[RMDB]
RNA sequence: GGGAACGACUCGAGUAGAGUCGAAAAGGGGUCCUGACUCCCUUGGAUUUACAUAAGGAGGUAUAGCCUGAAGCCUCCACGGGCUGCGAACUUAUGUUGUCAGGGAGUCCAGGACGGAGGCACCCAAAACGGUCCAAGAGUUCGCUCUUGGACCGAACCGUACGUGAUAGUUCGCUAUCACGUACGGAAAAGAAACAACAACAACAAC
Reactivity to 2A3 in 0.01 (KOAc 150mM, MgCl2 10mM, bicine 150mM(pH8.5), 24C), signal-to-noise 2, nucleotides 027 to 156: g000g000g010g000u020c010c010u020g000a000c000u000c000c000c050u020u190g160g000a070u290u290u090a000c000a000u030a020a000g000g050a030g060g070u140a230u240a300g000c010c010u000g020a050a020g000c000c000u000c000c020a000c020g000g000g000c020u080g090c200g070a010a010c010u000u010a010u000g000u010u030g050u110c290a090g000g000g000a000g010u020c080c120a020g000g000a000c040g000g010a000g000g030c000a010c000c000c000a020a070a000a050c020g010g000u000c000c000a000a010g000a000g060u160u240c300g030c130u020c000u020u000g010g010a000c000c000g000a000a000
Overview: Chemical mapping of a 207-nucleotide RNA with 2A3. It was measured as part of the RMDB library RNAMAK. The reactions ran in a buffer of 150 mM KOAc, 10 mM MgCl2 and 150 mM bicine (pH 8.5), at 24 C. For 2A3 the reverse transcriptase was SuperScript II with manganese.